[RMDB]
RNA sequence: GGGAACGACUCGAGUAGAGUCGAAAAUGAAUAUAUGUUUUGACAUACGCGAUAAUUGUUCAUUGGAGAAGUUCAUGUCUACUCCCAAUGCCAUCUUUAUUUCUGAUAGAAAAAUCAAGAAAUACCCCAUAAUUUAGUAGUUCGCUACUAAAUUAUGAAAAGAAACAACAACAACAAC
Reactivity to 2A3 in 0.01 (KOAc 150mM, MgCl2 10mM, bicine 150mM(pH8.5), 24C), signal-to-noise 2, nucleotides 027 to 126: u040g010a110a000u150a020u080a050u240g040u050u050u040u090g060a020c000a010u040a040c020g030c010g060a020u050a120a080u150u040g000u050u010c020a020u000u030g040g020a080g000a190a000g020u040u080c060a040u140g070u030c020u030a030c000u020c030c000c000a000a010u030g050c030c020a060u060c050u040u240u020a020u020u010u000c010u010g010a030u060a080g220a100a160a060a020a000u010c010a080a000g000a000a040a010u030a030c000c000c000
Reactivity to DMS in 0.01 (KOAc 150mM, MgCl2 10mM, bicine 150mM(pH8.5), 24C), signal-to-noise 3, nucleotides 027 to 126: u000g010a110a110u030a140u010a040u000g010u000u000u000u000g020a040c000a070u000a040c070g000c030g020a070u000a090a130u000u000g010u000u000c000a060u000u010g000g020a140g010a070a060g000u000u000c130a080u010g010u000c030u000a080c060u010c040c010c050a030a080u000g010c200c080a060u000c050u000u010u000a000u000u000u000c010u000g000a010u000a110g010a030a070a140a080a010u000c020a030a050g000a000a010a000u000a060c080c020c030